The record gives the reactivity of an RNA of 177 nucleotides to DMS and 2A3. For 2A3, 3,235 sequencing reads were counted. For DMS the reverse transcriptase was MarathonRT. For DMS, 4,288 sequencing reads were counted.
RNA sequence: GGGAACGACUCGAGUAGAGUCGAAAAUCGCUGCCCCAGGAGACACAGGGUGGGGGGCACAGGAUUGGGCCAGGCCGGGAGCCGCUCAACCUGGGCAGGCUCUGAGCCAGCACAGACGUGAGCUGGCAGCUGGUAUGAGAUUCGUCUCAUACCAGCUAAAAGAAACAACAACAACAAC
Reactivity to DMS in 0.01 (KOAc 150mM, MgCl2 10mM, bicine 150mM(pH8.5), 24C), signal-to-noise 4, nucleotides 027 to 126: u000c080g020c070u000g010c020c000c010c050a150g010g010a120g030a130c130a100c130a100g000g020g020u000g000g010g010g000g000g010c040a050c070a030g010g010a120u000u000g010g010g020c020c050a120g030g020c030c010g010g000g010a120g020c020c020g020c010u000c020a060a080c110c070u000g010g000g010c030a090g000g000c020u000c020u000g000a160g000c000c000a020g010c010a130c060a050g010a100c140g020u010g010a090g010c000u000g010g000c050
Reactivity to 2A3 in 0.01 (KOAc 150mM, MgCl2 10mM, bicine 150mM(pH8.5), 24C), signal-to-noise 2, nucleotides 027 to 126: u110c030g010c110u060g020c000c000c000c000a070g090g070a070g030a020c100a000c050a100g030g000g040u060g030g040g010g000g020g040c030a020c020a020g000g080a150u050u070g050g020g010c070c080a070g050g000c000c030g160g010g030a050g000c000c000g000c000u000c000a060a130c010c060u050g000g000g000c000a030g060g000c000u010c020u040g000a020g000c020c000a000g000c020a010c010a060g200a050c120g110u120g050a030g000c000u020g000g000c000